[RMDB]
RNA sequence: GGGAACGACUCGAGUAGAGUCGAAAAGAUAUGGAUUCCAGACAUGUCUUCAGAUCGGAAACGAUCUGGGACAACAGCUGGAUCCUAAGUCAAAAGGAAUAAAGCUGCUUCGGCAGCUUUAUUCCAACUAAAUUCGAAGGUUCGCCUUCGAAUUUAGAAAAGAAACAACAACAACAAC
Reactivity to DMS in 0.01 (KOAc 150mM, MgCl2 10mM, bicine 150mM(pH8.5), 24C), signal-to-noise 3, nucleotides 027 to 126: g010a020u010a300u010g000g000a040u010u010c000c010a000g010a050c040a160u000g000u000c000u010u020c010a000g000a010u000c000g000g000a130a070a180c000g000a000u000c000u000g000g010g000a020c000a010a070c230a150g000c010u000g000g000a040u000c000c000u000a040a110g000u000c030a090a110a130a120g000g010a030a000u000a010a010a000g010c000u000g000c010u000u010c210g060g030c000a000g010c010u000u000u000a000u000u010c010c000a040a070